[RMDB]
Structure probing data (DMS and 2A3) for a 177-nucleotide construct. For DMS the reverse transcriptase was MarathonRT. 2A3 adducts were read by reverse transcription with SuperScript II with manganese. High 2A3 reactivity points to a flexible backbone, as in loops and unpaired stretches.
RNA sequence: GGGAACGACUCGAGUAGAGUCGAAAAUCUAGCAAUAUAUUUGCAGGUUUUAGGUCUAAGUGGUGAAUAUCGAUCUCUGAAUAUAUUGAUAACCUUCACAAAUUUGCUGAUUAUUUUUGUAGCGCUCAGUAGACAUAAGCUUCGGCUUAUGUCUACUAAAAGAAACAACAACAACAAC
Reactivity to DMS in 0.01 (KOAc 150mM, MgCl2 10mM, bicine 150mM(pH8.5), 24C), signal-to-noise 2, nucleotides 027 to 126: u000c010u010a110g020c000a010a040u020a060u060a080u040u000u010g020c100a030g000g040u000u020u000u010a070g020g010u000c030u000a090a090g010u010g020g040u010g010a040a100u000a060u010c080g000a050u000c050u020c050u000g010a100a050u010a070u010a050u000u000g000a050u000a030a070c110c030u000u020c050a070c040a030a050a080u010u010u010g020c020u020g000a050u010u010a080u000u010u010u000u000g000u000a050g000c120g010c130u010c130
Reactivity to 2A3 in 0.01 (KOAc 150mM, MgCl2 10mM, bicine 150mM(pH8.5), 24C), signal-to-noise 5, nucleotides 027 to 126: u020c020u050a040g020c010a020a010u080a020u010a110u220u050u080g030c010a000g020g040u000u020u040u100a060g010g030u020c050u050a080a140g090u110g130g030u080g110a120a100u100a040u170c060g020a020u000c080u000c020u020g020a060a000u130a020u060a050u130u030g030a020u050a100a050c010c000u080u100c050a030c020a060a140a110u130u170u150g030c020u040g040a070u040u050a080u030u150u050u090u130g140u140a010g010c030g000c040u060c090

Conditions: 150 mM KOAc, 10 mM MgCl2 and 150 mM bicine (pH 8.5), 24 C.